[RMDB]
RNA sequence: GGGAACGACUCGAGUAGAGUCGAAAAAGACCACAUCCGAAUGGUAGAAGUUCAGACCUAUGCUGAAAUCAGUAGUGACAUGGCUGAUGAAAUUACUCUAAGUGGCUAGAUUGCCAUGUAUUUUUAAAAUAAUAAACACUCCCUUGCCAUUAAGAAGCUAUAUAACCUUGUUCGCAAGGUUAUAUAGAAAAGAAACAACAACAACAAC
Reactivity to 2A3 in 0.01 (KOAc 150mM, MgCl2 10mM, bicine 150mM(pH8.5), 24C), signal-to-noise 5, nucleotides 027 to 156: a010g060a040c010c010a020c010a060u080c050c030g090a130a040u070g060g010u050a080g020a180a040g040u060u060c040a050g020a090c020c010u080a050u140g030c040u070g050a070a090a050u120c030a050g060u120a010g030u030g060a030c030a040u030g020g000c030u020g030a030u040g040a050a010a090u160u130a050c020u020c020u130a110a050g030u010g010g000c000u020a040g010a180u070u140g010c000c010a020u010g010u010a100u050u110u040u080u120a070a060a010a010u130a050a040u070a070a110a000c020a000c020u040c010c010c000u020u030g010c020c000a000u030u040a040a030g050a060a000g090
Reactivity to DMS in 0.01 (KOAc 150mM, MgCl2 10mM, bicine 150mM(pH8.5), 24C), signal-to-noise 3, nucleotides 027 to 156: a090g000a130c010c010a080c030a140u000c040c050g030a070a070u020g010g010u010a070g010a140a120g000u010u000c050a080g010a110c050c020u000a080u000g050c010u010g000a060a120a090u010c030a080g010u010a050g050u020g000a070c060a040u000g020g020c000u000g010a140u000g000a100a080a120u000u010a050c050u000c030u000a080a130g010u010g010g030c020u000a110g000a160u000u000g010c020c010a030u000g000u000a010u000u000u000u030u000a070a000a060a140u010a020a100u000a070a070a120c030a080c040u000c010c010c000u000u000g010c010c020a080u000u000a040a090g010a130a160g020
Structure probing data (2A3 and DMS) for a 207-nucleotide construct.
For 2A3 the reverse transcriptase was SuperScript II with manganese.
Conditions: 150 mM KOAc, 10 mM MgCl2 and 150 mM bicine (pH 8.5), 24 C.
DMS adducts were read by reverse transcription with MarathonRT.
For 2A3, 3,610 sequencing reads were counted.